An RNA of 177 nucleotides, treated with 2A3 and read out base by base.
RNA sequence: GGGAACGACUCGAGUAGAGUCGAAAACUGGAUACCUUAAUCAAAGAGAAAUCGGACCUGAUUUUGAAAUUAAAACCUUACACUACUUUGGCUUUAGUAGGCAAGCCUGAAUUAGGUAUUUUAGCUCCGAUACGUGCUCCUUCGGGAGCACGUAUCGAAAAGAAACAACAACAACAAC
Reactivity to 2A3 in 0.01 (KOAc 150mM, MgCl2 10mM, bicine 150mM(pH8.5), 24C), signal-to-noise 2, nucleotides 027 to 126: c060u020g050g000a000u050a040c000c000u070u050a060a040u060c050a000a170a070g070a020g090a060a000a000u030c040g030g030a230c040c030u250g140a250u070u060u000u000g140a160a140a130u170u140a140a130a100a090c010c010u090u250a020c100a050c080u190a030c020u030u110u080g040g000c000u070u100u000a060g020u120a120g170g000c030a040a040g010c000c000u030g130a060a070u060u010a030g020g000u030a000u050u010u020u150a060g060c020u030c050